[RMDB]
RNA sequence: GGGAACGACUCGAGUAGAGUCGAAAAGCAGCAGUGAAUAAAAAUAAACAUGAAGAUCAAGAACAAGAUACAAACGGCAAGUAUCGUUCGAUCCAUGAGCCGAAUAAUAUCACAAAGAAGAAGAAAAAUUACCUAAUUAAUUCGUUAAUUAGGUAAUAAAAGAAACAACAACAACAAC
Reactivity to 2A3 in 0.01 (KOAc 150mM, MgCl2 10mM, bicine 150mM(pH8.5), 24C), signal-to-noise 3, nucleotides 027 to 126: g010c060a000g000c030a030g030u050g060a120a100u210a110a110a010a000a020u200a050a090a000c000a000u030g070a130a040g000a030u060c070a080a070g010a010a000c030a150a050g000a010u040a030c040a030a170a010c040g140g010c050a140a000g000u010a000u010c010g000u050u040c010g020a000u010c000c000a010u020g020a020g040c010c010g000a000a020u100a050a010u050a030u060c020a020c030a100a090a000g070a100a020g010a030a010g050a010a210a000a000
Reactivity to DMS in 0.01 (KOAc 150mM, MgCl2 10mM, bicine 150mM(pH8.5), 24C), signal-to-noise 4, nucleotides 027 to 126: g010c060a050g020c070a050g010u000g020a050a080u020a020a100a150a080a070u010a080a060a080c030a010u000g000a150a080g010a050u000c050a090a110g020a030a030c050a100a070g010a020u000a010c040a060a090a080c130g010g020c100a070a110g010u000a000u000c000g010u000u000c020g010a040u000c000c030a030u010g010a120g030c050c100g000a030a050u010a060a110u000a050u000c050a030c080a020a070a090g000a060a050g000a080a080g000a040a070a080a050
This 177-nucleotide RNA was probed chemically with 2A3 and DMS. 2A3 adducts were read by reverse transcription with SuperScript II with manganese. The reactions ran in a buffer of 150 mM KOAc, 10 mM MgCl2 and 150 mM bicine (pH 8.5), at 24 C.